[RMDB]
RNA sequence: GGGAACGACUCGAGUAGAGUCGAAAAGUGUGAAGUGAGUGAGCCGCUUACGAGCACGAAUUACAGGGCUCUAUUGACAUUACUGGGCGCCAGGAGCCCUACCUGGACAAGUCUCGAAGAUCGGGCCGAGAUUGAGAGACGACUAUUACCGGCCACACGUGAUACCUAAUUUCGAUUAGGUAUCACGAAAAGAAACAACAACAACAAC
Reactivity to 2A3 in 0.01 (KOAc 150mM, MgCl2 10mM, bicine 150mM(pH8.5), 24C), signal-to-noise 6, nucleotides 027 to 156: g020u020g000u010g080a070a040g010u000g020a000g000u040g020a050g100c040c050g020c030u010u030a010c020g020a020g000c000a000c040g020a030a010u170u100a070c080a060g000g010g010c010u020c020u060a190u080u160g050a060c060a080u070u250a130c110u120g060g080g000c070g040c050c010a020g010g020a010g000c000c000c000u020a040c000c000u030g020g020a020c030a090a080g000u000c000u010c020g050a060a020g010a020u030c040g000g080g000c030c040g070a080g010a050u090u090g010a030g000a000g000a050c010g010a000c020u060a070u210u110a120c060c010g000g010c000c020a050c000a000
Reactivity to DMS in 0.01 (KOAc 150mM, MgCl2 10mM, bicine 150mM(pH8.5), 24C), signal-to-noise 4, nucleotides 027 to 156: g040u010g010u000g030a150a220g010u020g000a080g030u010g010a180g040c060c050g030c030u000u000a070c040g010a300g020c010a040c040g010a120a140u000u000a150c080a080g020g040g000c010u000c020u000a080u020u000g030a060c030a090u010u000a230c090u000g020g050g040c040g000c030c030a070g010g010a080g010c020c010c000u000a010c020c030u030g000g000a110c090a080a190g010u000c010u000c010g000a140a160g000a050u000c040g080g010g040c100c050g010a140g010a090u000u000g000a300g000a120g010a090c010g010a100c090u000a120u000u000a090c030c020g020g000c010c030a060c060a170
An RNA of 207 nucleotides, treated with 2A3 and DMS and read out base by base. For DMS, 5,765 sequencing reads were counted. The RNA was probed in 150 mM KOAc, 10 mM MgCl2 and 150 mM bicine (pH 8.5) at 24 C. It was measured as part of the RMDB library OK3TST. As a SHAPE reagent, 2A3 marks flexible, mostly unpaired nucleotides at the ribose 2'-OH.